[RMDB]
RNA sequence: GGGAACGACUCGAGUAGAGUCGAAAAGCCUCUAGCGUUAGCAAAACGCUGUUUGCGCAAUGAUCUGGAUUUAGCGCAAGUAGGUCCGAAAUCCAGAUCAACAUUUCGGACAACCGCGCUAAUUAAACAUUUCGUUCAAGUUCGCUUGAACGAAAUGAAAAGAAACAACAACAACAAC
Reactivity to DMS in 0.01 (KOAc 150mM, MgCl2 10mM, bicine 150mM(pH8.5), 24C), signal-to-noise 4, nucleotides 027 to 126: g010c030c000u010c100u000a050g020c010g010u000u010a090g020c220a090a080a060a030c030g010c000u000g000u000u010u000g010c020g040c040a130a100u030g000a070u000c020u000g010g020a110u000u000u010a040g010c000g030c000a070a120g020u000a070g020g010u000c000c000g010a040a030a030u000c070c070a120g000a100u010c120a070a110c210a090u010u000u000c010g010g000a040c000a080a060c110c130g010c010g020c000u000a010a050u000u000a070a090a180
Reactivity to 2A3 in 0.01 (KOAc 150mM, MgCl2 10mM, bicine 150mM(pH8.5), 24C), signal-to-noise 2, nucleotides 027 to 126: g020c000c000u080c080u090a010g010c030g020u040u040a050g050c080a150a230a050a030c040g010c050u000g070u020u100u030g040c030g000c030a060a110u140g020a070u020c040u050g100g020a090u030u030u110a020g000c010g000c030a000a010g070u090a030g090g070u000c000c010g010a010a020a000u000c040c030a010g020a060u040c000a000a010c000a010u060u040u010c000g020g000a010c000a030a040c090c030g010c010g010c010u010a040a060u120u090a070a040a000